[RMDB]
RNA sequence: GGGAACGACUCGAGUAGAGUCGAAAACUGUACGUUUGUUUGUUGGGCUCAUGGCUUUGAAUUAACGUCUGCAUCAUACUUUUGCAAGAUAGGUAAGGAACAGAAGUGUUGCAUGUGCAAUAGACGCGAACUAUUGUACCUUCGGGUACAAUAGUUCAAAAGAAACAACAACAACAAC
Reactivity to DMS in 0.01 (KOAc 150mM, MgCl2 10mM, bicine 150mM(pH8.5), 24C), signal-to-noise 2, nucleotides 027 to 126: c020u000g020u010a120c100g040u020u000u000g030u000u000u000g020u010u000g000g000g010c110u000c110a070u000g010g000c050u000u010u000g010a090a100u010u000a080a070c100g020u000c010u010g000c030a060u000c040a080u000a040c040u000u010u000u000g000c140a040a060g010a080u000a050g030g030u000a050a100g000g000a090a260c040a040g020a020a090g020u010g010u000u010g040c160a070u000g000u000g000c040a100a100u000a070g000a050c090g010c150